Description: Structure probing data (2A3 and DMS) for a 207-nucleotide construct. The reactions ran in a buffer of 150 mM KOAc, 10 mM MgCl2 and 150 mM bicine (pH 8.5), at 24 C. Reactivities are given for positions 27 through 156.
[RMDB]
RNA sequence: GGGAACGACUCGAGUAGAGUCGAAAAAAGCGUUCAGUGACGCUUCUAGCCGUGCUGGUGGUGCUGACUUCCUGAUGCGAGUCGGUGACAAGAAGGUAACACUUAACGGAGCCACUACGACUUACCGAGAGUUGAUUGGUGAGGAACAGUGGAACGCCUAACUGUCUUGGUUCGCCAAGACAGUUAGAAAAGAAACAACAACAACAAC
Reactivity to 2A3 in 0.01 (KOAc 150mM, MgCl2 10mM, bicine 150mM(pH8.5), 24C), signal-to-noise 4, nucleotides 027 to 156: a000a000g080c030g000u080u030c090a090g020u070g140a020c040g000c030u030u020c010u010a010g020c050c020g080u130g080c140u100g010g050u020g010g000u040g040c020u030g040a060c020u100u100c020c020u150g090a140u180g060c100g010a010g030u030c000g000g050u060g020a060c040a050a030g040a000a010g060g000u090a120a020c040a010c010u090u070a040a000c010g060g010a050g030c010c000a020c010u060a050c040g100a030c000u000u010a010c010c010g060a050g020a020g170u160u300g090a140u040u090g010g000u020g010a000g010g030a070a030c000a060g000u020g010g030a050a030c040g030c010
Reactivity to DMS in 0.01 (KOAc 150mM, MgCl2 10mM, bicine 150mM(pH8.5), 24C), signal-to-noise 2, nucleotides 027 to 156: a000a040g000c020g000u010u000c080a300g020u010g010a030c020g000c010u000u000c020u000a160g010c030c020g020u000g060c060u000g030g030u020g010g020u010g050c070u000g020a270c010u020u000c030c000u010g020a090u000g010c060g000a130g020u000c040g010g040u000g050a140c060a050a050g010a060a050g000g000u000a050a080c070a070c050u000u000a070a100c020g000g020a190g110c010c000a080c020u100a130c040g010a300c000u000u000a060c020c040g010a060g010a250g000u010u000g030a130u000u000g040g030u000g000a090g080g000a080a100c010a060g000u000g000g000a030a100c070g020c050

The DMS profile rests on 3,469 reads. Source: RMDB library OK3TST, as collected in RNAgym.